[RMDB]
RNA sequence: GGGAACGACUCGAGUAGAGUCGAAAAUAAAUUCACAAUGACAUUCUCAUUCAGAGAAAGGACUGGAGACUGAAAUGUUGUGGAAAGAAAGCUCUGCGCUUGGCCAGCUGAGGAAACUCGAAUACUAUAGAGAGCUUAUGUUCGCAUAAGCUCUCUAAAAAGAAACAACAACAACAAC
Reactivity to 2A3 in 0.01 (KOAc 150mM, MgCl2 10mM, bicine 150mM(pH8.5), 24C), signal-to-noise 1, nucleotides 027 to 126: u010a010a080a030u070u070c010a000c000a070a070u070g020a060c000a000u000u020c010u000c070a050u130u160c060a020g010a000g090a260a000a140g070g060a010c020u020g050g000a000g010a000c080u040g050a090a070a060u120g000u000u000g020u060g140g040a080a000a000g100a030a050a000g070c000u070c100u030g040c120g060c060u040u050g000g020c000c050a030g000c040u000g050a000g000g000a090a020a030c000u000c000g000a040a080u070a290c050u030a010
Reactivity to DMS in 0.01 (KOAc 150mM, MgCl2 10mM, bicine 150mM(pH8.5), 24C), signal-to-noise 3, nucleotides 027 to 126: u000a030a070a060u010u000c020a030c030a060a010u020g010a200c080a050u000u000c030u000c000a140u010u070c060a070g000a060g000a050a160a080g010g010a060c090u020g000g000a030g000a120c100u000g000a050a070a100u020g000u000u000g010u000g000g000a030a120a080g000a140a110a100g010c030u020c050u000g000c070g020c050u000u000g000g000c030c050a090g010c070u010g010a100g000g010a090a070a070c050u010c030g000a040a040u030a090c150u040a140
Overview
This 177-nucleotide RNA was probed chemically with 2A3 and DMS. DMS adducts were read by reverse transcription with MarathonRT. For 2A3, 476 sequencing reads were counted. Values cover nucleotides 27 to 126. Source: RMDB library OK1LIB, as collected in RNAgym. For 2A3 the reverse transcriptase was SuperScript II with manganese. Conditions: 150 mM KOAc, 10 mM MgCl2 and 150 mM bicine (pH 8.5), 24 C.